Conditions: 150 mM KOAc, 10 mM MgCl2 and 150 mM bicine (pH 8.5), 24 C. An RNA of 177 nucleotides, treated with DMS and 2A3 and read out base by base. 2A3 adducts were read by reverse transcription with SuperScript II with manganese. For DMS, 1,801 sequencing reads were counted.

[RMDB]
RNA sequence: GGGAACGACUCGAGUAGAGUCGAAAACAAAACUCGGCAGCUAAUCGCGGUGCUAAACCUUGUUCAAGGGCGACAUUAUCAACCGAUAUUGGCGCUGCAACCAAAUUCCUCACCCAACAAGCGCGAAGGAGGAGGAAUUAUUCGUAAUUCCUCCUCCAAAAGAAACAACAACAACAAC
Reactivity to DMS in 0.01 (KOAc 150mM, MgCl2 10mM, bicine 150mM(pH8.5), 24C), signal-to-noise 3, nucleotides 027 to 126: c050a050a060a090a120c070u010c080g050g030c070a050g030c040u000a090a080u010c040g040c030g000g000u000g020c040u000a050a060a130c020c010u000u000g010u000u010c140a110a040g020g010g040c030g020a020c060a050u000u000a040u010c030a110a100c190c140g010a010u020a030u000u000g010g000c010g000c060u000g030c070a020a070c040c060a050a040a150u010u010c010c010u000c040a120c010c020c020a050a050c140a050a120g010c090g000c080g000a080a100
Reactivity to 2A3 in 0.01 (KOAc 150mM, MgCl2 10mM, bicine 150mM(pH8.5), 24C), signal-to-noise 2, nucleotides 027 to 126: c010a010a080a020a050c040u030c020g030g000c020a060g000c040u050a080a010u050c030g000c020g000g020u020g040c000u050a090a050a070c000c010u050u050g040u170u150c080a070a070g100g000g000c020g020a000c010a050u060u040a040u070c020a060a210c120c030g020a010u010a020u040u020g020g000c020g000c030u040g040c010a030a040c010c010a070a040a010u040u060c010c000u040c030a050c060c010c000a040a040c030a170a010g200c030g000c000g070a060a070

Reactivities are given for positions 27 through 126.